[RMDB]
RNA sequence: GGGAACGACUCGAGUAGAGUCGAAAAGAUAUGGAUUGAGAACGACGAUAAGCUAGGUCGGAAACGACUAGCUUUUGACGUCGACAAUCCUAAGUCAAAGUACGUUCAGCUUCGGCUGAACGUACAAGAUACCCGACGAGUUCGCUCGUCGGGUAUCAAAAGAAACAACAACAACAAC
Reactivity to DMS in 0.01 (KOAc 150mM, MgCl2 10mM, bicine 150mM(pH8.5), 24C), signal-to-noise 1, nucleotides 027 to 126: g000a020u000a120u000g000g000a000u010u000g000a140g020a160a180c020g000a030c010g030a150u010a030a050g020c000u000a040g010g010u020c010g000g000a030a020a080c040g060a080c010u000a010g000c000u000u000u000u080g020a070c060g000u000c000g000a280c020a000a000u010c010c000u000a010a110g000u000c000a110a120a190g000u030a000c000g010u000u000c000a000g000c000u010u000c240g000g000c000u000g000a000a000c000g000u000a000c000a040a060
Reactivity to 2A3 in 0.01 (KOAc 150mM, MgCl2 10mM, bicine 150mM(pH8.5), 24C), signal-to-noise 1, nucleotides 027 to 126: g000a010u030a030u040g000g000a020u010u070g050a050g080a300a050c030g040a000c060g270a300u090a210a000g000c000u010a030g170g300u090c020g010g000a000a010a010c000g000a000c000u010a000g030c000u000u000u010u040g020a000c000g000u010c000g010a010c000a000a000u000c000c010u000a030a030g000u020c050a130a110a050g000u020a000c000g010u020u000c020a000g000c010u020u210c300g080g000c010u000g010a000a000c000g000u000a000c010a020a010